[RMDB]
The data come from the RNA Mapping Database (RMDB), library OK3TST. The record gives the reactivity of an RNA of 207 nucleotides to DMS and 2A3. For DMS, 10,246 sequencing reads were counted. Values cover nucleotides 27 to 156. The RNA was probed in 150 mM KOAc, 10 mM MgCl2 and 150 mM bicine (pH 8.5) at 24 C. For 2A3 the reverse transcriptase was SuperScript II with manganese.
RNA sequence: GGGAACGACUCGAGUAGAGUCGAAAAGUGUAUAGGCUUUCCGAGACCCCGCCUAUACACGAGUUAUGGGGUCAGGUCAUGUUAUGCUGGCUAUCUUACGUGUGCACCGAAGGGCUGCGGGUGCACACGAAUCUUACGCAGCCCAUUGCCAGCUAGAAUUACGAUAAUCAUUCGUGAUUAUCGUAAUAAAAGAAACAACAACAACAAC
Reactivity to DMS in 0.01 (KOAc 150mM, MgCl2 10mM, bicine 150mM(pH8.5), 24C), signal-to-noise 2, nucleotides 027 to 156: g010u000g010u000a010u000a030g010g010c100u000u000u000c060c040g020a220g000a040c010c000c010c070g000c030c000u000a010u000a020c010a020c000g020a100g020u010u000a080u000g040g010g020g020u000c020a100g000g010u000c040a120u000g020u010u000a090u000g030c040u000g010g010c030u010a100u010c080u010u000a160c030g020u000g000u000g000c030a040c030c020g010a080a070g020g010g020c000u010g030c020g030g000g030u000g000c020a010c010a010c020g010a030a050u010c090u010u000a100c120g020c010a050g000c020c010c010a210u000u000g000c010c010a050g000c020u000a100g010a190
Reactivity to 2A3 in 0.01 (KOAc 150mM, MgCl2 10mM, bicine 150mM(pH8.5), 24C), signal-to-noise 4, nucleotides 027 to 156: g000u010g000u000a010u000a000g020g000c040u110u180u080c100c050g030a060g010a120c020c000c000c000g000c000c000u000a000u000a000c010a000c010g010a030g020u130u160a140u220g020g000g000g000u010c010a010g030g090u060c060a050u120g030u110u190a040u180g010c010u010g000g020c020u050a090u090c110u140u180a040c010g010u000g010u010g000c000a000c010c020g060a090a140g010g010g000c000u010g010c020g010g000g010u010g000c000a000c000a000c000g010a010a000u040c000u050u090a030c040g000c030a000g020c000c000c000a020u030u120g010c020c000a000g000c030u040a020g040a050